[RMDB]
RNA sequence: GGGAACGACUCGAGUAGAGUCGAAAACAUAAUAAUUGGAGUUGUAAAGCUUCCAAAGAUUGCCAACUUCACAGACAUAGACCCAUUUGACACAGAAGAUGAUGUUGAAGUGAGAAUGAUUGAAGUCGCCCUACGGUAUAUUCGUAUACCGUAGGGCAAAAGAAACAACAACAACAAC
Reactivity to DMS in 0.01 (KOAc 150mM, MgCl2 10mM, bicine 150mM(pH8.5), 24C), signal-to-noise 1, nucleotides 027 to 126: c060a040u020a020a060u050a190a140u010u030g000g000a020g020u040u000g070u080a110a180a080g000c000u000u040c020c060a100a000a130g000a010u010u000g040c210c060a110a070c000u010u000c040a070c270a020g000a070c020a000u000a090g000a120c060c000c010a140u000u000u040g000a020c140a010c080a130g020a090a290g040a160u000g000a190u000g000u030u000g000a000a060g000u020g000a120g000a130a020u000g000a140u010u030g010a000a170g020u000c300
Reactivity to 2A3 in 0.01 (KOAc 150mM, MgCl2 10mM, bicine 150mM(pH8.5), 24C), signal-to-noise 2, nucleotides 027 to 126: c000a020u250a190a000u120a060a120u010u010g090g000a140g040u000u020g020u230a000a140a000g070c000u040u100c090c020a000a200a000g250a000u060u220g140c000c000a000a000c030u000u000c000a000c010a060g110a040c010a030u180a110g100a050c000c000c000a040u280u100u070g100a050c050a040c000a000g130a110a040g070a180u120g000a030u000g000u300u010g010a020a030g050u060g020a070g170a100a000u100g040a270u260u030g050a070a000g070u040c160